[RMDB]
RNA sequence: GGGAACGACUCGAGUAGAGUCGAAAACCACAUAUCUUCGGAUAUGUGGAAAUAAGGGAAACGGAUUAUUCCGGUCGACUCCGGAGAAACAAAGUGAAAUAAAAAGCAUCUUCUUCGGAAGAUGCAACACAAAGCAGGUGUUCGCACCUGCUUUGUGAAAAGAAACAACAACAACAAC
Reactivity to DMS in 0.01 (KOAc 150mM, MgCl2 10mM, bicine 150mM(pH8.5), 24C), signal-to-noise 1, nucleotides 027 to 126: c000c000a010c030a000u010a010u010c000u000u010c240g000g000a000u000a000u000g000u020g000g000a010a040a030u020a100a120g020g000g010a110a030a170c100g000g000a090u000u000a110u020u000c000c010g010g010u000c130g000a100c060u000c000c010g000g010a100g010a090a080a160c120a050a030a060g010u000g000a160a010a070u000a020a040a130a090a090g000c000a000u000c000u000u000c000u000u010c160g040g000a000a000g000a020u000g000c000a010a070
Reactivity to 2A3 in 0.01 (KOAc 150mM, MgCl2 10mM, bicine 150mM(pH8.5), 24C), signal-to-noise 1, nucleotides 027 to 126: c000c000a000c000a000u020a000u010c010u070u020c240g080g000a000u000a040u000g000u040g010g010a000a040a040u110a050a070g130g030g000a130a070a020c080g080g000a050u030u070a160u210u240c000c000g020g030u050c040g040a030c030u000c040c010g020g020a030g020a010a120a010c090a060a050a010g160u160g160a040a100a030u150a060a170a000a020a020g000c000a000u010c000u050u020c000u040u070c230g050g010a010a000g000a000u000g040c000a030a000